[RMDB]
RNA sequence: GGGAACGACUCGAGUAGAGUCGAAAAUCCUUCCUUUUCGAAGGAAGGACAGUGCACAGUCUUCGCAUCUGUGAAUCACACAACAGCCGUGUCUAUGCGAGGUUUUAAUCAAGUUCGCUUGAUUAAAUAUCCGUAGAUCAUUCGUGAUCUACGGAUAAAAAGAAACAACAACAACAAC
Reactivity to DMS in 0.01 (KOAc 150mM, MgCl2 10mM, bicine 150mM(pH8.5), 24C), signal-to-noise 4, nucleotides 027 to 126: u000c000c000u000u010c000c000u000u000u000u010c190g030a020a020g000g000a010a000g000g000a010c070a040g010u000g000c010a020c020a010g000u000c070u010u000c010g020c010a040u000c010u000g000u000g010a110a060u010c200a210c020a080c050a080a100c140a120g010c030c030g010u020g000u010c160u000a020u000g010c010g000a020g010g000u000u000u000u000a000a020u000c010a000a010g000u000u010c200g020c010u000u000g000a010u000u000a010a020a060
Reactivity to 2A3 in 0.01 (KOAc 150mM, MgCl2 10mM, bicine 150mM(pH8.5), 24C), signal-to-noise 3, nucleotides 027 to 126: u000c000c000u000u000c000c000u030u050u020u100c250g120a010a010g000g010a000a000g000g000a010c020a030g050u050g000c020a000c000a020g010u020c060u070u020c070g020c010a020u000c010u010g000u010g040a070a110u140c030a030c000a010c020a160a130c030a080g100c020c030g120u080g030u050c050u070a020u030g010c000g020a010g040g010u030u050u020u040a000a000u000c000a000a010g010u040u040c160g070c090u000u010g000a000u000u010a020a020a000